[RMDB]
Chemical mapping of a 177-nucleotide RNA with DMS. Values are in units of 0.01, from 0 to 300, in steps of 10. Source: RMDB library OK2TRN, as collected in RNAgym.
RNA sequence: GGGAACGACUCGAGUAGAGUCGAAAAACGCGCGGCGUAUGCGGCGCGCUAUAUAGCGAUAUAUGCGCGCAUAAUACGCUAUAUACGCCGCUAUAUAAUACGCCGCUAUUAUCGCAUAGCGUAUGCGUAUACGGGGACCGUUCGCGGUCCCCGUAUAAAAAGAAACAACAACAACAAC
Reactivity to DMS in 0.01 (KOAc 150mM, MgCl2 10mM, bicine 150mM(pH8.5), 24C), signal-to-noise 1, nucleotides 027 to 126: a060c060g050c140g040c010g010g030c000g020u000a040u000g010c290g040g000c020g000c180g040c030u000a010u000a000u000a030g000c050g030a110u000a040u000a040u000g000c040g050c230g050c000a040u000a040a140u000a180c010g010c010u000a050u000a010u000a000c170g060c030c030g000c000u000a020u030a080u020a140a020u000a000c000g000c000c000g000c000u010a040u000u020a030u000c030g010c020a080u000a050g020c030g020u000a120u000g000c000g000